[RMDB]
RNA sequence: GGGAACGACUCGAGUAGAGUCGAAAAGUUACGUUGUUAUGCGUACUACCUGCGGUUGUUUAUUCAACAUGUACUGUACCCACUAUGAAUAACGCUAAAUUAACGUCUACCGAAACAUCGUUUAAUGUAGAUCAGGACAGUUCGCUGUCCUGAUCUAAAAAGAAACAACAACAACAAC
Reactivity to DMS in 0.01 (KOAc 150mM, MgCl2 10mM, bicine 150mM(pH8.5), 24C), signal-to-noise 3, nucleotides 027 to 126: g020u000u000a030c030g020u000u000g010u010u010a110u000g030c090g000u000a020c060u000a110c110c110u010g050c100g030g000u000u000g020u000u000u000a120u030u010c020a010a030c060a050u020g020u000a050c110u000g000u010a080c020c040c040a130c140u010a070u000g000a030a060u000a020a040c020g000c100u000a040a060a070u000u000a090a150c050g020u000c030u000a090c040c040g010a060a020a060c130a130u000c070g010u020u000u000a060a090u000g020
Reactivity to 2A3 in 0.01 (KOAc 150mM, MgCl2 10mM, bicine 150mM(pH8.5), 24C), signal-to-noise 2, nucleotides 027 to 126: g040u070u030a000c010g010u030u050g160u170u100a050u140g030c000g000u000a020c020u040a040c020c000u040g070c060g090g030u040u020g000u060u200u070a170u070u080c000a000a000c030a100u100g070u000a070c040u080g030u110a110c010c050c030a030c050u120a110u180g110a140a040u010a020a000c080g000c100u090a070a100a070u130u050a070a030c060g010u000c040u040a040c040c010g080a100a050a030c020a050u050c030g040u000u000u120a050a030u170g020